An RNA of 177 nucleotides, treated with 2A3 and DMS and read out base by base. The RNA was probed in 150 mM KOAc, 10 mM MgCl2 and 150 mM bicine (pH 8.5) at 24 C. For DMS, 5,899 sequencing reads were counted. DMS (dimethyl sulfate) methylates the pairing face of unpaired adenines and cytosines.
RNA sequence: GGGAACGACUCGAGUAGAGUCGAAAAAUCUUGUCUGGCCUUGCGCUUUUCGGUGGCAAAAUGUGGGUGGUUGAUAAGACUCUCAAAGGCCUUUACGAUUCGCAGCUCAUCGCACGAGUAAGCAAUGCCCUAAAGGGAAUUUCGAUUCCCUUUAGGGAAAAGAAACAACAACAACAAC
Reactivity to 2A3 in 0.01 (KOAc 150mM, MgCl2 10mM, bicine 150mM(pH8.5), 24C), signal-to-noise 3, nucleotides 027 to 126: a000u030c010u040u050g050u040c020u030g040g020c020c030u030u060g030c020g000c070u060u040u080u090c040g060g010u040g030g000c020a030a040a060a190u130g030u080g040g020g010u090g010g040u060u030g020a030u040a090a060g020a010c010u030c010u000c080a050a040a050g050g000c030c000u020u050u020a030c030g030a030u030u070c060g000c030a020g000c020u010c010a060u100c040g020c030a030c050g050a030g020u030a010a020g030c020a050a070u140g020
Reactivity to DMS in 0.01 (KOAc 150mM, MgCl2 10mM, bicine 150mM(pH8.5), 24C), signal-to-noise 5, nucleotides 027 to 126: a090u000c040u000u000g010u000c040u000g010g010c070c030u000u000g030c100g020c130u000u000u010u010c050g010g020u000g010g020c060a050a050a050a100u020g020u000g010g000g020u000g000g020u010u000g000a110u010a070a090g000a050c040u000c020u000c120a070a080a120g010g010c020c010u010u000u010a090c050g000a090u000u000c060g010c080a100g000c040u000c050a050u010c100g010c080a090c080g010a050g010u010a060a110g010c100a080a070u010g010